Chemical mapping of a 177-nucleotide RNA with DMS and 2A3.
RNA sequence: GGGAACGACUCGAGUAGAGUCGAAAAUGAAGAUGAGGUAAGUCGUAACAAGGUAAGCGUACCGGAAGGUGUGCUUAGCACAUCGAGGCGUAGCUUUAACAUAAAGCGUCCAGCUUACACCUGAAAGAAUCUUGCUACGUUUCGACGUAGCAAGAUUAAAAGAAACAACAACAACAAC
Reactivity to DMS in 0.01 (KOAc 150mM, MgCl2 10mM, bicine 150mM(pH8.5), 24C), signal-to-noise 3, nucleotides 027 to 126: u000g000a120a070g000a060u000g000a170g000g010u000a040a120g010u010c090g010u000a050a110c120a080a080g000g010u000a010a020g000c010g030u010a100c060c000g010g020a120a150g000g010u000g010u010g010c010u020u020a070g010c020a010c030a010u010c020g000a140g000g020c070g010u000a150g000c020u000u000u010a070a120c230a120u000a040a010a010g000c020g000u000c030c070a200g010c020u010u000a050c060a100c060c010u000g000a060a070a130g010
Reactivity to 2A3 in 0.01 (KOAc 150mM, MgCl2 10mM, bicine 150mM(pH8.5), 24C), signal-to-noise 2, nucleotides 027 to 126: u170g060a100a070g020a070u120g020a040g010g080u040a040a070g020u000c020g020u080a060a040c050a050a040g110g010u010a030a030g000c020g030u040a040c040c000g020g030a050a000g000g000u030g000u000g010c010u130u050a040g010c010a000c010a030u050c010g040a040g060g010c050g000u040a010g000c050u070u060u100a150a040c070a110u180a030a020a000g040c010g010u000c020c010a000g010c010u000u000a000c020a050c000c010u060g080a040a050a020g150
DMS adducts were read by reverse transcription with MarathonRT. The 2A3 profile rests on 1,638 reads. Conditions: 150 mM KOAc, 10 mM MgCl2 and 150 mM bicine (pH 8.5), 24 C. The DMS profile rests on 2,434 reads.